RNA sequence: GGGAACGACUCGAGUAGAGUCGAAAACGCUAAGGACAAAAGCGAUAGCUAGCCUGUAAACACCCGUUAAAUCUAAUUAGAUACGUCAAAAAAUCCCAAGAGAACGGCCAUUCUCUUGGGAUUUGGUUACCUGAAGCAAUUUCGAUUGCUUCAGGUAAAAAGAAACAACAACAACAAC
Reactivity to 2A3 in 0.01 (KOAc 150mM, MgCl2 10mM, bicine 150mM(pH8.5), 24C), signal-to-noise 2, nucleotides 027 to 126: c040g000c040u030a060a080g070g030a090c080a090a100a020a000g040c020g090a070u060a050g040c010u010a020g010c010c000u050g060u110a090a040a000c010a010c010c000c000g010u040u150a020a040a010u010c020u080a060a150u100u020a040g010a010u020a030c030g020u030c030a000a000a000a070a070a000u020c000c000c000a000a000g010a000g010a000a020c060g160g010c050c000a060u040u000c000u000c010u000u020g010g030g000a000u000u000u000g000g000u030
Reactivity to DMS in 0.01 (KOAc 150mM, MgCl2 10mM, bicine 150mM(pH8.5), 24C), signal-to-noise 3, nucleotides 027 to 126: c100g000c080u010a070a100g000g020a070c110a110a060a080a090g020c030g000a100u020a050g020c050u000a100g010c010c000u000g000u020a040a060a130c170a110c000c010c020g020u000u020a010a010a040u000c000u000a120a100u010u010a140g010a030u010a020c010g010u010c040a010a010a020a000a010a000u000c010c000c000a020a000g000a020g010a000a000c060g010g030c210c140a240u000u010c000u000c010u000u000g000g000g010a000u000u000u000g000g000u000
An RNA of 177 nucleotides, treated with 2A3 and DMS and read out base by base. The reactions ran in a buffer of 150 mM KOAc, 10 mM MgCl2 and 150 mM bicine (pH 8.5), at 24 C. DMS adducts were read by reverse transcription with MarathonRT.